[RMDB]
An RNA of 177 nucleotides, treated with DMS and 2A3 and read out base by base.
The reactions ran in a buffer of 150 mM KOAc, 10 mM MgCl2 and 150 mM bicine (pH 8.5), at 24 C.
For 2A3 the reverse transcriptase was SuperScript II with manganese.
Values cover nucleotides 27 to 126.

RNA sequence: GGGAACGACUCGAGUAGAGUCGAAAAGAUAUGGAGUGUCUGGAGUGUGACCACCGACGAAGCCGACGUUAUCGGAAACGAUAACGUCGGCAGAGGUGGUUUACACGUUGAAAGACACUCCUAAGUCGUAUAUCCAAUUCUUCGGAAUUGGAUAUACAAAAGAAACAACAACAACAAC
Reactivity to DMS in 0.01 (KOAc 150mM, MgCl2 10mM, bicine 150mM(pH8.5), 24C), signal-to-noise 3, nucleotides 027 to 126: g000a090u010a300u010g010g010a020g040u000g010u000c000u010g000g010a070g010u010g010u000g010a030c000c000a000c000c010g000a230c300g000a120a200g000c010c000g030a010c000g000u000u000a020u000c010g010g010a130a110a260c010g020a020u010a010a010c000g010u000c000g020g050c000a000g000a100g000g010u000g010g010u000u000u000a010c000a010c000g020u010u000g000a150a170a030g000a000c000a000c000u000c010c000u000a010a070g000u000c120
Reactivity to 2A3 in 0.01 (KOAc 150mM, MgCl2 10mM, bicine 150mM(pH8.5), 24C), signal-to-noise 1, nucleotides 027 to 126: g100a030u190a110u300g000g000a000g010u010g010u000c010u010g070g040a050g010u040g000u010g000a010c000c000a000c010c020g180a300c080g090a300a020g000c010c000g030a000c000g000u000u000a000u020c000g020g050a100a000a030c020g000a000u000a010a010c020g000u000c000g000g000c030a010g010a000g000g000u000g030g030u010u000u010a000c000a010c030g010u200u050g000a000a000a020g010a000c000a000c000u000c000c000u010a010a010g000u000c030
The data come from the RNA Mapping Database (RMDB), library TTRINS.